[RMDB]
RNA sequence: GGGAACGACUCGAGUAGAGUCGAAAAGAACAGUGCUGGGGUCUCAGGAGGCAGCGCUCUCAGGACGUCACCACCAUGGCCUGGGCUCUGCUCCUCCUCACCCUCCUCACUCAGGGCACAGGUGAAAUCUCAUUUCGACUUUCGAGUCGAAAUGAGAAAAAGAAACAACAACAACAAC
Reactivity to 2A3 in 0.01 (KOAc 150mM, MgCl2 10mM, bicine 150mM(pH8.5), 24C), signal-to-noise 3, nucleotides 027 to 126: g090a060a000c060a030g020u030g040c060u060g000g010g000g050u010c070u020c130a020g010g000a000g060g000c050a000g000c010g020c020u010c020u020c010a030g030g000a050c030g040u110c030a020c130c020a050c000c060a090u130g030g000c010c000u010g000g000g000c020u000c040u050g020c020u010c000c000u000c000c000u020c010a020c010c000c000u000c000c010u060c000a050c010u060c030a050g010g000g070c050a020c020a040g100g050u080g060a030a100a070
Reactivity to DMS in 0.01 (KOAc 150mM, MgCl2 10mM, bicine 150mM(pH8.5), 24C), signal-to-noise 2, nucleotides 027 to 126: g010a060a120c080a060g020u020g020c030u000g000g000g000g000u010c060u040c230a010g000g000a000g000g000c130a000g000c040g020c070u000c000u000c030a000g000g000a040c020g030u030c220a060c040c040a060c080c110a100u020g010g020c000c000u000g020g000g000c080u000c000u050g000c030u000c000c040u000c020c010u010c180a040c030c000c000u000c110c010u000c020a080c050u040c090a140g000g030g000c000a020c050a040g010g000u000g010a040a070a020
Structure probing data (2A3 and DMS) for a 177-nucleotide construct. It was measured as part of the RMDB library RFM100. DMS adducts were read by reverse transcription with MarathonRT.